[RMDB]
RNA sequence: GGGAACGACUCGAGUAGAGUCGAAAACAUGGUAGAAUUCCGGUUCUGUAUUUCUUGCCAUUGGUUAUUGAUGGCGUCUGUCUAUUUAGGGAAAUAGCGGAAGUCGUAUUUCACCUUUUAUGCGUUAGGGUAAAUCAAUCUUCGGAUUGAUUUACCCAAAAGAAACAACAACAACAAC
Reactivity to 2A3 in 0.01 (KOAc 150mM, MgCl2 10mM, bicine 150mM(pH8.5), 24C), signal-to-noise 4, nucleotides 027 to 126: c060a100u160g070g000u060a110g020a100a060u040u010c030c010g070g050u100u010c030u100g030u040a030u020u010u010c010u030u250g000c000c000a010u010u060g100g030u180u140a060u090u190g040a040u020g010g030c010g000u020c010u030g100u000c010u020a140u070u250u140a150g040g010g140a000a010a000u030a010g090c040g000g020a040a000g090u030c010g010u060a030u000u010u020c040a090c000c000u000u070u070u060a130u160g140c160g040u070u190a130
Reactivity to DMS in 0.01 (KOAc 150mM, MgCl2 10mM, bicine 150mM(pH8.5), 24C), signal-to-noise 2, nucleotides 027 to 126: c130a030u020g030g010u010a140g020a040a040u000u000c100c000g010g000u000u010c040u020g000u030a030u000u020u000c010u000u010g010c010c020a000u010u000g010g000u020u070a040u070u030g000a040u000g000g010c010g000u040c010u030g000u060c070u000a040u070u020u030a130g030g010g010a040a000a020u000a050g030c010g000g000a050a020g020u030c030g000u030a040u010u010u000c050a080c010c000u000u020u060u040a030u030g000c090g000u000u010a210

Conditions: 150 mM KOAc, 10 mM MgCl2 and 150 mM bicine (pH 8.5), 24 C. This 177-nucleotide RNA was probed chemically with 2A3 and DMS. DMS adducts were read by reverse transcription with MarathonRT. The data come from the RNA Mapping Database (RMDB), library OK1LIB. The DMS profile rests on 3,287 reads.